[RMDB]
RNA sequence: GGGAACGACUCGAGUAGAGUCGAAAAUCAGAUGAGACUAGGCAUCAGACUAGAUAGUAUCACACUACAGGUACAUAGUAGAGACAUACAUAGAUGCGUAUGACACAUCAGAGGCGCGGGCCACCGACGUCGGUCAGUAUUUCGAUACUGACCGACGAAAAGAAACAACAACAACAAC
Reactivity to DMS in 0.01 (KOAc 150mM, MgCl2 10mM, bicine 150mM(pH8.5), 24C), signal-to-noise 2, nucleotides 027 to 126: u000c110a080g010a100u030g000a120g010a180c040u010a070g010g030c010a050u000c020a130g040a200c060u000a050g010a130u010a080g000u000a130u000c050a130c180a150c080u050a040c110a050g030g020u000a030c100a030u000a050g030u040a080g000a080g020a120c180a030u000a050c090a060u010a080g000a040u010g000c020g000u010a020u000g000a100c130a020c030a040u000c060a090g000a090g030g010c040g010c040g000g000g040c030c010a080c060c050g000a110
Reactivity to 2A3 in 0.01 (KOAc 150mM, MgCl2 10mM, bicine 150mM(pH8.5), 24C), signal-to-noise 1, nucleotides 027 to 126: u060c030a010g020a040u010g020a020g050a100c060u020a040g030g020c010a010u000c010a020g130a090c020u050a050g100a130u180a080g120u030a060u110c000a010c000a000c070u220a020c020a060g030g080u090a040c040a100u100a040g000u020a000g010a010g050a090c000a060u060a030c000a020u170a050g040a010u040g000c000g040u100a090u050g060a040c000a000c010a050u000c000a000g010a020g090g030c010g030c000g010g120g030c050c000a020c020c010g050a030